[RMDB]
RNA sequence: GGGAACGACUCGAGUAGAGUCGAAAAUUGGAUGCAGCGGAAACAAUAUAGCUCUUUAUAAUGUUGAAGCUAGUCAUGUUGUCCCAUCGUUUGGAACUUUAAUGACUUUAAAUCAUGAUUCUGAUUAUCCCAAUGGUAGGGCUGGUGGUGACGAUCAGCAGUGAACGUAGUUCGCUACGUUCACUGCAAAAGAAACAACAACAACAAC
Reactivity to 2A3 in 0.01 (KOAc 150mM, MgCl2 10mM, bicine 150mM(pH8.5), 24C), signal-to-noise 2, nucleotides 027 to 156: u070u040g040g010a030u030g020c080a020g000c020g020g040a040a000a030c030a090a010u050a020u020a060g040c010u040c010u180u170u020a110u030a050a080u060g040u050u010g030a050a010g010c010u020a010g020u030c020a020u040g030u170u030g030u030c000c000c010a030u080c050g090u050u140u100g000g000a030a010c010u030u060u070a230a070u080g020a050c060u160u150u220a070a110a120u090c060a050u060g070a100u230u010c020u070g030a110u020u060a110u060c020c030c000a020a070u090g050g050u100a060g000g000g000c020u030g000g030u040g010g000u060g030a040c060g010a050u030c040a050
Reactivity to DMS in 0.01 (KOAc 150mM, MgCl2 10mM, bicine 150mM(pH8.5), 24C), signal-to-noise 1, nucleotides 027 to 156: u010u020g000g020a080u020g000c090a090g080c020g030g000a300a040a050c020a040a050u000a010u000a070g010c090u010c070u000u010u000a020u000a140a080u000g030u010u000g010a160a190g030c020u010a020g000u000c010a050u010g020u000u000g000u000c030c000c010a050u000c300g030u010u000u030g020g000a030a000c000u010u000u010a070a020u000g000a020c000u000u000u010a100a100a060u010c050a030u000g000a190u000u000c030u000g020a080u000u000a090u000c020c000c030a100a110u010g000g000u000a080g050g030g010c030u010g000g000u010g010g010u000g000a050c000g000a070u020c010a270